This 177-nucleotide RNA was probed chemically with DMS.
Values cover nucleotides 27 to 126.
[RMDB]
RNA sequence: GGGAACGACUCGAGUAGAGUCGAAAAGAUAUGGAGAGAGGCCGAUAAGCCUAACUCGGAAACGAGUUGAGGCUUUUGACGGCUGGUUCCUAAGUCGCGGAUAAGGGUUGUUCGCAACCCUUAUCAACAUGACAUGGAUCUUCGGAUCCAUGUCAUGAAAAGAAACAACAACAACAAC
Reactivity to DMS in 0.01 (KOAc 150mM, MgCl2 10mM, bicine 150mM(pH8.5), 24C), signal-to-noise 4, nucleotides 027 to 126: g010a040u000a230u000g010g010a050g000a140g010a160g000g010c010c010g010a110u020a010a020g010c000c000u000a010a000c000u000c000g010g000a060a060a120c000g010a010g000u000u000g010a020g010g020c000u000u010u000u010g020a190c070g010g010c000u000g010g010u000u000c000c010u010a060a160g000u000c020g020c250g000g020a010u000a010a000g000g000g010u000u000g010u010u020c140g030c010a010a010c000c000c000u000u000a000u000c000a070a160